Conditions: 150 mM KOAc, 10 mM MgCl2 and 150 mM bicine (pH 8.5), 24 C. Structure probing data (2A3 and DMS) for a 177-nucleotide construct. In probing experiments dimethyl sulfate is read out at A N1 and C N3, which are open when not base-paired. For DMS the reverse transcriptase was MarathonRT. It was measured as part of the RMDB library TTRDES. The 2A3 profile rests on 4,773 reads. Reactivities are given for positions 27 through 126. The DMS profile rests on 1,907 reads. For 2A3 the reverse transcriptase was SuperScript II with manganese.
RNA sequence: GGGAACGACUCGAGUAGAGUCGAAAAGAUAUGGACGGAUCUGUUGGGAGUCGUCACGAUCGGAAACGAUCGAAGUCGACGAAGAACAACAGAGUCCGUCCUAAGUCAAAACUGUCCUUCGGGACAGCCUAUGGUAGGGCUUCGGCCCUACCAUAGGAAAAGAAACAACAACAACAAC
Reactivity to 2A3 in 0.01 (KOAc 150mM, MgCl2 10mM, bicine 150mM(pH8.5), 24C), signal-to-noise 2, nucleotides 027 to 126: g040a030u100a040u130g010g000a000c000g020g000a020u030c000u030g010u040u010g010g010g020a090g080u010c000g000u010c030a010c070g000a000u020c010g030g000a130a040a040c010g010a020u020c030g020a210a020g110u080c040g000a000c030g110a200a070g020a070a030c000a000a010c000a010g010a010g050u010c010c010g000u000c000c010u000a000a000g000u000c020a010a030a140a180c010u000g010u040c000c020u070u090c300g130g010g000a000c000a010g020
Reactivity to DMS in 0.01 (KOAc 150mM, MgCl2 10mM, bicine 150mM(pH8.5), 24C), signal-to-noise 3, nucleotides 027 to 126: g000a060u000a300u000g010g010a030c000g020g000a240u020c000u000g020u010u000g000g000g010a220g030u000c000g000u000c030a300c050g000a000u000c000g010g010a130a110a300c000g010a000u000c000g000a150a120g020u000c030g020a030c000g010a040a100g000a210a170c010a000a010c020a010g000a030g020u010c020c020g000u000c000c000u010a010a070g000u000c040a110a090a090a240c020u000g000u000c000c010u010u020c210g020g020g010a020c000a000g000